RNA sequence: GGGAACGACUCGAGUAGAGUCGAAAAGCUCCUUUGCGCUUUUUUUUCGGAUUAGGCGUGGAGGCGAAAGUCACCCUCCUCGCAUCACAAGUUCGUGCUUGCGACUUACACGUAGGGCGAGGGGUGGAAAACAGUAUGGGAUUCGUCCCAUACUGAACUUCACAUAUCUCUUCGGAGAUAUGUGAAGAAAAGAAACAACAACAACAAC
Reactivity to DMS in 0.01 (KOAc 150mM, MgCl2 10mM, bicine 150mM(pH8.5), 24C), signal-to-noise 1, nucleotides 027 to 156: g000c180u000c000c040u000u000u000g020c010g020c000u000u000u000u000u000u000u000u000c300g030g010a080u010u000a010g020g000c000g060u000g010g000a010g000g000c090g000a070a080a060g000u010c040a110c000c000c010u000c000c010u010c000g060c190a100u000c020a020c020a080a070g010u000u000c170g030u000g020c040u010u000g020c000g010a050c070u000u000a110c090a090c090g020u000a090g000g010g000c010g010a040g000g010g010g050u000g000g010a020a100a070a170c010a010g020u000a040u000g010g010g020a100u000u000c300g030u000c000c000c000a010u010a010c000u000g010a020a100
Reactivity to 2A3 in 0.01 (KOAc 150mM, MgCl2 10mM, bicine 150mM(pH8.5), 24C), signal-to-noise 4, nucleotides 027 to 156: g020c030u060c000c020u000u000u020g000c000g020c000u050u020u020u000u010u020u090u150c270g150g020a060u080u030a010g000g010c010g000u020g000g010a010g010g010c060g070a120a060a020g130u120c040a050c030c000c000u010c000c010u000c010g010c040a100u080c020a020c010a040a040g040u160u080c030g020u080g200c170u140u220g000c010g030a010c020u040u060a050c110a030c110g080u100a170g000g010g060c000g000a000g000g020g000g030u200g010g020a040a110a020a010c000a010g000u000a000u000g000g010g010a000u010u100c150g060u010c030c000c000a000u000a000c000u000g000a010a000